An RNA of 207 nucleotides, treated with 2A3 and read out base by base. It was measured as part of the RMDB library OK3TST.
RNA sequence: GGGAACGACUCGAGUAGAGUCGAAAACUUCCGCUACCGGGUAGCCUUCCCGUAGGAAUUGUUCGAAGGUGAUUCCGAAGCGCUCGGCCAAGCGCUCCGACCCGUUUUUGCAAUACCCGAGUUUCCGGGCAUGGCGCAUAAAGAUGCGCGGCUGAUCCGAUAAUGCACGUUUCGACGUGCAUUAUCGAAAAGAAACAACAACAACAAC
Reactivity to 2A3 in 0.01 (KOAc 150mM, MgCl2 10mM, bicine 150mM(pH8.5), 24C), signal-to-noise 1, nucleotides 027 to 156: c000u080u040c020c020g030c060u090a100c030c020g000g070g000u050a000g030c010c040u040u070c050c070c040g040u010a010g020g060a090a180u070u090g050u130u110c070g020a070a040g010g030u050g030a090u160u070c100c030g000a000a000g000c010g010c030u030c040g150g000c030c020a060a040g000c000g010c000u000c020c050g090a090c000c000c010g040u000u000u020u120u190g030c050a040a040u030a110c050c000c010g000a020g030u000u030u030c020c000g000g000g060c070a040u090g060g000c010g030c000a020u080a040a200a040g190a060u030g020c000g010c030g040g070c020u040g020a030u000c020
The RNA was probed in 150 mM KOAc, 10 mM MgCl2 and 150 mM bicine (pH 8.5) at 24 C. As a SHAPE reagent, 2A3 marks flexible, mostly unpaired nucleotides at the ribose 2'-OH.